Structure probing data (DMS) for a 177-nucleotide construct. The reactions ran in a buffer of 150 mM KOAc, 10 mM MgCl2 and 150 mM bicine (pH 8.5), at 24 C.

[RMDB]
RNA sequence: GGGAACGACUCGAGUAGAGUCGAAAAAUUGCGCAGCCGGCCUUCCUGGAGCGCGUGCUGUCUCUGGGGGAGCGGCUGCGGUCGCAGCUGCGGCAGGCGCUGGCCGGCAACGCGCAUGUAAAGGAGGCUUUUUGGCCUAAUUCGUUAGGCCAAAAAGAAAAGAAACAACAACAACAAC
Reactivity to DMS in 0.01 (KOAc 150mM, MgCl2 10mM, bicine 150mM(pH8.5), 24C), signal-to-noise 2, nucleotides 027 to 126: a060u010u010g020c010g040c020a120g010c010c010g030g010c010c010u010u000c050c030u010g000g000a070g020c040g000c100g000u000g020c070u000g000u010c040u010c070u010g020g010g010g020g010a160g060c020g000g000c000u000g000c010g020g010u000c160g020c030a050g000c030u000g010c000g010g000c030a050g010g000c050g040c040u000g010g020c000c010g000g020c000a050a020c100g000c010g000c010a020u000g010u010a050a060a100g010g000a100g020g020